This 207-nucleotide RNA was probed chemically with DMS and 2A3. Reactivities are given for positions 27 through 156. The 2A3 profile rests on 580 reads. DMS adducts were read by reverse transcription with MarathonRT. The data come from the RNA Mapping Database (RMDB), library OK3TST. Conditions: 150 mM KOAc, 10 mM MgCl2 and 150 mM bicine (pH 8.5), 24 C. For DMS, 2,590 sequencing reads were counted. Values are in units of 0.01, from 0 to 300, in steps of 10.
RNA sequence: GGGAACGACUCGAGUAGAGUCGAAAAGGGCAUGGAGUAUCCUGAGGCACAAUCACUCCCCAAAAAUUCCUCCACCACAUCCUUGCUGGCUCCCUGUCUGGUGUUGAUUUGGGGUGCCGGGGUUCUCCUUUUCAGAGAGUCUGGUGCCUGGGGGCUAACGGAGUAAUCAUUUCGAUGAUUACUCCGUAAAAGAAACAACAACAACAAC
Reactivity to DMS in 0.01 (KOAc 150mM, MgCl2 10mM, bicine 150mM(pH8.5), 24C), signal-to-noise 1, nucleotides 027 to 156: g000g030g030c070a080u000g030g030a060g020u000a090u010c050c030u020g030a120g000g040c120a050c070a120a100u010c070a140c070u000c020c000c020c050a020a040a060a150a210u000u010c060c020u020c000c020a040c060c020a140c040a110u000c020c040u000u020g030c090u000g000g010c060u000c020c030c020u010g000u000c010u030g000g010u010g020u010u020g020a120u000u000u000g000g010g000g010u000g010c050c030g000g040g040g000u000u000c020u000c010c000u000u000u000u000c130a070g010a070g010a020g000u000c020u000g000g030u010g030c030c060u000g030g020g000g050g030c250u010a080
Reactivity to 2A3 in 0.01 (KOAc 150mM, MgCl2 10mM, bicine 150mM(pH8.5), 24C), signal-to-noise 1, nucleotides 027 to 156: g060g000g010c020a050u050g000g020a040g000u020a030u100c020c050u020g050a010g030g000c020a030c020a100a070u150c070a090c060u130c020c010c020c010a030a040a040a000a010u160u060c060c020u060c060c000a050c050c000a020c010a080u030c000c020u020u150g000c020u030g060g000c000u030c000c000c000u010g030u080c010u010g100g000u010g010u110u070g010a130u120u020u130g050g020g000g000u050g010c040c030g050g000g000g000u110u000c000u000c000c010u060u120u120u100c010a000g070a010g000a000g070u010c000u030g040g010u020g050c010c010u010g000g000g010g020g020c010u050a030